[RMDB]
RNA sequence: GGGAACGACUCGAGUAGAGUCGAAAAAUCUAGCCCGAUAAAGGUGGAUGGCUUUGCCUCUUGGUGAUGGCGCUCGAUGGCAACGAGGGCAGCACCGUAAGCGCCCAUCAAUUCGCAAAUAUCGGGGGUUACGUCCAGGAUUCGUCCUGGACGUAACAAAAGAAACAACAACAACAAC
Reactivity to DMS in 0.01 (KOAc 150mM, MgCl2 10mM, bicine 150mM(pH8.5), 24C), signal-to-noise 2, nucleotides 027 to 126: a040u000c060u010a210g010c010c020c000g010a050u020a030a130a190g020g010u010g010g010a040u000g010g000c090u000u010u020g010c010c030u010c170u020u000g030g000u010g000a080u020g010g020c010g000c000u000c000g020a120u010g000g020c190a140a150c040g010a030g020g010g030c010a060g000c010a020c000c000g000u010a050a120g020c080g000c300c010c010a020u000c020a060a160u000u010c080g020c040a060a060a240u000a030u000c010g000g020g000g010
Reactivity to 2A3 in 0.01 (KOAc 150mM, MgCl2 10mM, bicine 150mM(pH8.5), 24C), signal-to-noise 3, nucleotides 027 to 126: a000u020c030u050a060g100c000c000c000g000a010u020a030a100a020g090g030u060g090g020a060u010g010g000c100u220u180u260g020c000c000u030c040u030u080g000g020u010g030a110u110g070g010c090g050c040u000c010g120a140u150g140g090c090a140a040c060g020a030g010g110g060c000a020g030c000a010c000c000g000u010a070a030g030c020g000c020c000c000a010u000c010a010a200u190u160c050g010c090a030a100a030u070a010u020c000g010g010g020g010